[RMDB]
RNA sequence: GGGAACGACUCGAGUAGAGUCGAAAAUCCCAUAGGUUGCCGAAUCCGAAAGGUCCGGAGGAACCGCUUUUUGGGGUUAAUCUGCAGUGAAGCUGCAGUAGGGAUACCUUCUGUCCCGCACCCGACAGCUAACUCCUAAGGCAAUAAAGGAAGGAGAAUACCUGAGUACUUUCGAGUACUCAGGUAUAAAAGAAACAACAACAACAAC
Reactivity to DMS in 0.01 (KOAc 150mM, MgCl2 10mM, bicine 150mM(pH8.5), 24C), signal-to-noise 2, nucleotides 027 to 156: u000c000c000c010a120u000a020g030g000u000u010g000c010c040g020a160a300u010c070c020g000a140a150a190g000g010u000c020c050g030g030a100g030g010a110a080c130c070g020c190u000u000u000u000u000g000g020g030g010u000u000a110a130u000c040u010g040c020a110g020u000g040a140a230g030c010u000g000c000a050g020u010a060g010g010g020a030u000a080c040c070u010u000c060u010g010u000c180c000c030g000c050a100c010c010c010g000a120c090a010g000c060u020a110a230c010u000c030c000u020a140a140g000g000c040a070a090u020a060a110a080g010g020a080a060g050g060a300g000a170
Reactivity to 2A3 in 0.01 (KOAc 150mM, MgCl2 10mM, bicine 150mM(pH8.5), 24C), signal-to-noise 1, nucleotides 027 to 156: u010c000c000c000a000u050a000g090g000u000u000g060c000c000g020a040a100u040c020c000g050a080a050a040g030g050u010c060c090g020g000a000g030g010a030a060c160c010g070c030u200u060u010u180u250g010g000g000g000u000u030a050a020u070c010u000g000c000a000g010u030g270a190a050g120c010u010g010c000a010g000u000a010g030g000g000a030u070a120c010c000u080u070c000u050g020u000c000c000c000g000c040a030c000c000c000g030a070c060a030g010c000u000a020a050c000u010c010c000u070a110a020g000g030c000a000a020u070a040a040a000g000g000a000a030g020g070a020g010a050